[RMDB]
RNA sequence: GGGAACGACUCGAGUAGAGUCGAAAAAUACACCAGCAGUAGGACUCAGCGACCGUCACAACAAGGUUGUGCUGGUAUCCGACGGUCGUAUAGGCCUGUCUUGCAGGUUGCCUUGCACUGACGUGCCACACCAUUUACAGAUUCGUCUGUAAAUGAACUGAUACGAGCCUUUCGAGGCUCGUAUCAGAAAAGAAACAACAACAACAAC
Reactivity to DMS in 0.01 (KOAc 150mM, MgCl2 10mM, bicine 150mM(pH8.5), 24C), signal-to-noise 1, nucleotides 027 to 156: a110u020a110c060a210c010c020a020g030c030a110g030u000a120g010g000a110c000u010c070a140g010c010g000a030c010c000g030u000c010a170c090a100a110c100a090a150g020g010u010u010g020u000g030c000u000g000g010u000a050u000c030c000g000a030c020g000g010u000c000g000u030a110u000a110g000g030c010c000u020g050u000c020u010u000g000c050a100g000g010u000u000g030c010c020u020u000g030c100a110c010u020g010a050c040g010u000g000c040c000a040c010a120c050c000a000u000u000u000a000c000a010g010a090u010u000c290g000u010c010u010g020u000a000a010a000u000g000a030a130
Reactivity to 2A3 in 0.01 (KOAc 150mM, MgCl2 10mM, bicine 150mM(pH8.5), 24C), signal-to-noise 1, nucleotides 027 to 156: a000u120a010c050a000c030c000a000g010c000a000g020u090a050g000g020a020c010u000c090a030g000c020g000a000c010c000g020u010c020a020c030a200a200c080a150a200g030g000u020u000g060u060g080c040u030g000g000u000a010u000c000c010g000a000c000g000g000u000c020g000u000a040u030a010g000g000c010c000u010g020u010c050u030u120g010c010a010g040g000u090u160g090c010c000u020u050g000c010a030c070u060g040a030c090g040u060g030c010c040a060c010a010c050c010a000u000u000u000a000c000a000g000a080u010u080c100g100u020c080u000g000u020a000a000a000u000g010a030a020
This 207-nucleotide RNA was probed chemically with DMS and 2A3. For 2A3 the reverse transcriptase was SuperScript II with manganese.